[RMDB]
RNA sequence: GGGAACGACUCGAGUAGAGUCGAAAACGAAGAGCACUUUUGUUAUUCGCGGCUCUGAAUUUGUUAAGCUUACUAAUGAGAUAGGUGAUAAAUUUGAGGCCUACCUUUCAGCGUAUGCUAGAUUAAAGUACUAUUCAGGCACUGGCAGUGAACAAGAACGUGCCUAUUGUUUCGACAAUAGGCACGUAAAAGAAACAACAACAACAAC
Reactivity to 2A3 in 0.01 (KOAc 150mM, MgCl2 10mM, bicine 150mM(pH8.5), 24C), signal-to-noise 2, nucleotides 027 to 156: c040g000a050a000g020a000g040c060a050c080u000u120u170u060g110u050u100a110u130u120c030g010c050g120g060c020u010c000u070g020a030a060u170u110u070g020u070u060a050a020g010c010u030u050a010c010u130a120a090u200g030a050g050a080u010a060g000g030u080g090a070u080a100a140a120u150u140u200g090a030g070g000c000c000u000a000c030c000u050u070u160c080a030g050c020g060u030a000u060g010c020u000a020g020a090u110u200a080a030a000g010u010a010c010u030a030u010u070c030a020g010g020c050a000c070u050g070g000c010a020g020u010g050a050a000c060a040a010g050a080
Reactivity to DMS in 0.01 (KOAc 150mM, MgCl2 10mM, bicine 150mM(pH8.5), 24C), signal-to-noise 1, nucleotides 027 to 156: c070g000a160a040g000a070g030c000a170c070u000u000u000u000g030u000u000a150u000u000c050g020c030g060g030c000u000c000u010g010a080a010u000u000u020g030u000u000a080a110g000c000u000u000a090c020u020a120a190u000g000a070g000a020u000a050g010g070u000g010a210u000a000a060a160u000u000u010g010a150g020g000c010c000u000a030c010c010u020u000u000c040a040g050c080g030u000a070u000g000c030u000a160g020a180u000u000a050a090a100g020u010a050c080u000a120u000u000c100a180g000g030c160a060c020u000g020g000c020a050g030u000g000a030a030c080a020a090g010a080